This 177-nucleotide RNA was probed chemically with DMS and 2A3.
2A3 adducts were read by reverse transcription with SuperScript II with manganese.
For DMS the reverse transcriptase was MarathonRT.
The reactions ran in a buffer of 150 mM KOAc, 10 mM MgCl2 and 150 mM bicine (pH 8.5), at 24 C.
The data come from the RNA Mapping Database (RMDB), libraries RFM100 and RFMREP.
RNA sequence: GGGAACGACUCGAGUAGAGUCGAAAAUUCCGCAUAUUGGCUUUGCGAAGUCGAUAUGGACAGGACAUAGUUAAAUUGCAAAUAACUAUGCAAGUAUUACUAUUUCCCAGAACGUUAUGUAACGUACCCAACCAGUGAAAUUCGUUUCACUGGUUGGAAAAGAAACAACAACAACAAC
Reactivity to DMS in 0.01 (KOAc 150mM, MgCl2 10mM, bicine 150mM(pH8.5), 24C), signal-to-noise 6, nucleotides 027 to 126: u000u000c000c000g010c010a000u010a010u000u000g010g000c010u000u000u000g020c170g020a030a000g030u000c000g000a000u000a000u000g010g000a160c020a120g000g010a040c300a040u000a000g000u000u000a050a050a150u000u010g000c040a040a100a090u010a100a110c290u030a090u000g000c000a030a030g000u030a090u020u010a030c020u000a020u000u010u000c000c000c000a150g030a110a040c040g000u000u000a080u010g010u010a010a030c010g000u010a180c240
Reactivity to 2A3 in 0.01 (KOAc 150mM, MgCl2 10mM, bicine 150mM(pH8.5), 24C), signal-to-noise 5, nucleotides 027 to 126: u030u000c000c000g000c010a000u010a000u000u000g000g010c000u060u010u030g090c250g120a000a010g000u010c000g000a000u000a000u000g000g000a000c010a110g010g010a010c020a040u000a000g000u000u010a020a130a170u060u040g000c020a000a030a180u100a080a090c080u080a090u090g020c000a000a010g040u120a090u150u070a020c010u010a040u040u010u000c000c000c000a020g060a080a000c030g000u020u070a140u300g180u160a050a000c010g010u040a050c010